The record gives the reactivity of an RNA of 177 nucleotides to 2A3 and DMS.
2A3 is a SHAPE reagent: it acylates the 2'-hydroxyl of flexible nucleotides of all four kinds.
It was measured as part of the RMDB library RFM100.
For 2A3 the reverse transcriptase was SuperScript II with manganese.
[RMDB]
RNA sequence: GGGAACGACUCGAGUAGAGUCGAAAAAUGUGUGCAAGUGUUAGGGUGUGGAAACCCCAGCGCGAAAUGAAAGUGAAGGGCAGCGUAAGUUGUCUGAGGUAGGAAAUGCUGCGGGCUUCGGUCUGCGGCUAGUGAUGACCUUCGGGUCAUCACUAGCAAAAGAAACAACAACAACAAC
Reactivity to 2A3 in 0.01 (KOAc 150mM, MgCl2 10mM, bicine 150mM(pH8.5), 24C), signal-to-noise 2, nucleotides 027 to 126: a000u100g140u020g010u010g040c050a130a020g000u030g000u090u150a100g040g050g000u040g060u190g060g120a090a070a060c000c020c000c020a090g000c050g020c000g070a050a020a010u300g060a110a000a000g010u020g150a000a050g030g050g000c000a020g000c060g010u130a130a190g010u130u000g010u010c000u010g010a110g020g140u030a000g010g050a130a050a010u130g000c000u040g010c000g000g080g010c000u030u000c130g100g000u000c000u000g000c010g000
Reactivity to DMS in 0.01 (KOAc 150mM, MgCl2 10mM, bicine 150mM(pH8.5), 24C), signal-to-noise 2, nucleotides 027 to 126: a060u020g010u030g000u000g010c010a120a090g000u000g030u000u030a160g010g010g000u000g020u030g000g000a170a090a110c010c000c020c050a020g010c010g030c000g000a060a040a150u030g020a080a150a070g010u030g000a140a200g000g000g010c000a000g000c000g000u060a090a050g020u020u000g020u020c010u000g020a000g000g080u010a040g000g020a060a100a090u010g010c040u020g000c010g010g000g000c000u000u030c110g000g000u000c010u010g010c010g000